An RNA of 177 nucleotides, treated with DMS and 2A3 and read out base by base. For 2A3 the reverse transcriptase was SuperScript II with manganese. The DMS profile rests on 4,635 reads.

RNA sequence: GGGAACGACUCGAGUAGAGUCGAAAAGUUAUUAAAGAAGGGAAUAACAUUCUAGUGUACGUCGCGAGUUACAAUGAGGUCGAUACGCUCAGCAAACUACUCUUGGAAAAGGGUUUUUCAGUAACCACCUCACCUGUAUUUUCGAAUACAGGUGAGGAAAAGAAACAACAACAACAAC
Reactivity to DMS in 0.01 (KOAc 150mM, MgCl2 10mM, bicine 150mM(pH8.5), 24C), signal-to-noise 3, nucleotides 027 to 126: g010u010u010a010u000u010a060a130a060g010a080a120g000g030g010a050a000u000a010a050c020a180u000u000c010u020a040g040u010g000u000a020c070g000u000c010g000c020g000a110g000u010u040a060c100a090a060u020g010a070g020g010u010c030g020a130u040a040c090g000c020u010c050a090g000c100a040a050a080c080u010a020c020u000c020u000u030g000g040a030a050a040a060g000g000g000u010u000u020u000u000c110a080g000u010a090a120c080c100a100
Reactivity to 2A3 in 0.01 (KOAc 150mM, MgCl2 10mM, bicine 150mM(pH8.5), 24C), signal-to-noise 6, nucleotides 027 to 126: g000u010u000a010u030u090a100a100a170g160a050a080g060g030g070a030a040u040a030a010c020a030u030u060c040u070a050g030u030g030u110a040c040g010u010c020g000c030g060a040g060u050u070a080c090a060a120u150g020a050g060g020u040c030g020a060u010a160c030g000c040u070c040a050g010c060a050a050a040c010u040a040c010u020c000u040u070g080g040a040a080a050a070g040g010g000u040u000u010u020u050c020a020g030u050a020a040c020c000a030